Source: RMDB library M2PK50, as collected in RNAgym. Structure probing data (DMS and 2A3) for a 177-nucleotide construct. High DMS reactivity at an A or C suggests that its Watson-Crick edge is free. The reactions ran in a buffer of 150 mM KOAc, 10 mM MgCl2 and 150 mM bicine (pH 8.5), at 24 C. 2A3 adducts were read by reverse transcription with SuperScript II with manganese. For DMS the reverse transcriptase was MarathonRT.
RNA sequence: GGGAACGACUCGAGUAGAGUCGAAAAGGCUCCCACUUCGGUGGGAGCCAAAGCUGAACGCGCAGCAAGCCUUAAACAUGGAAAAACGCACGUCCAAUGCGCAAAGCUUCCCCUUCGGGGGAAGCAACGAUACUAGUGACUUCGGUCACUAGUAUCGAAAAGAAACAACAACAACAAC
Reactivity to DMS in 0.01 (KOAc 150mM, MgCl2 10mM, bicine 150mM(pH8.5), 24C), signal-to-noise 2, nucleotides 027 to 126: g010g020c010u000c010c000c000a000c030u000u010c180g010g010u010g030g010g040a000g010c000c010a000a000a020g000c030u000g000a030a110c030g000c030g000c020a050g020c140a140a080g000c000c030u000u010a090a090a130c220a110u000g000g010a020a050a040a080a170c080g000c060a020c020g000u000c020c020a070a100u010g000c020g000c150a080a090a150g000c000u000u000c010c000c000c000u000u020c100g020g000g000g000g000a000a000g010c010a010a020
Reactivity to 2A3 in 0.01 (KOAc 150mM, MgCl2 10mM, bicine 150mM(pH8.5), 24C), signal-to-noise 1, nucleotides 027 to 126: g000g010c000u000c040c000c000a000c010u030u010c230g060g010u000g000g030g000a010g040c000c000a000a000a000g020c010u000g010a090a020c040g030c020g010c030a000g010c020a040a060g010c000c000u180u210a130a210a020c110a180u160g040g060a000a100a050a110a000c070g000c040a010c030g070u000c040c020a050a090u080g030c020g000c000a070a070a010g010c000u010u000c010c000c000c020u000u140c190g020g000g000g000g010a000a000g000c000a010a000